[RMDB]
RNA sequence: GGGAACGACUCGAGUAGAGUCGAAAAGCUUAACCGUUUCGACGGUUAAGCAAAAACCGUAGGCUGUGGGCAACAGCUAUAAAGAGUGACUUCGAAAGAGGUCAUAGACAUGCAACAGCCUAAACGGAAAAAAUGCCACAGAUUCGUCUGUGGCAAACUUAACUCUAGGUUUCGACCUAGAGUUAAGAAAAGAAACAACAACAACAAC
Reactivity to 2A3 in 0.01 (KOAc 150mM, MgCl2 10mM, bicine 150mM(pH8.5), 24C), signal-to-noise 3, nucleotides 027 to 156: g000c010u000u010a010a010c010c000g000u000u030u120c240g130a020c010g000g000u000u000a000a000g020c000a010a000a000a010a010c000c000g000u000a000g010g000c000u000g020u040g050g170g040c020a100a060c060a290g030c040u020a060u160a090a120a010g170a010g040u040g000a000c010u010u000c020g040a070a040a100g000a000g000g000u000c000a000u010a010g010a030c050a040u070g000c010a000a010c010a000g000c000c000u010a050a110a010c010g000g000a010a000a030a090a000a090u080g000c020c000a000c000a010g010a020u030u070c110g060u000c130u000g000u000g000g000c000a030a000a000
Reactivity to DMS in 0.01 (KOAc 150mM, MgCl2 10mM, bicine 150mM(pH8.5), 24C), signal-to-noise 2, nucleotides 027 to 156: g010c000u000u000a020a030c000c010g030u000u010u000c300g010a150c000g040g000u000u000a000a020g000c000a010a010a070a110a080c020c000g000u000a020g000g030c020u000g030u000g020g020g000c000a070a220c070a150g000c080u010a150u020a090a080a140g010a300g010u000g010a030c000u020u000c000g000a170a130a280g000a020g000g010u000c000a020u000a030g000a140c090a260u000g030c000a090a040c030a040g020c000c000u000a010a050a090c040g020g000a000a010a090a050a030a140u000g000c030c000a000c010a010g000a100u000u000c300g020u000c010u020g030u010g020g000c020a000a000a010
Source: RMDB library RNAMAK, as collected in RNAgym. Chemical mapping of a 207-nucleotide RNA with 2A3 and DMS. For DMS, 5,038 sequencing reads were counted. 2A3 adducts were read by reverse transcription with SuperScript II with manganese. The 2A3 profile rests on 2,766 reads.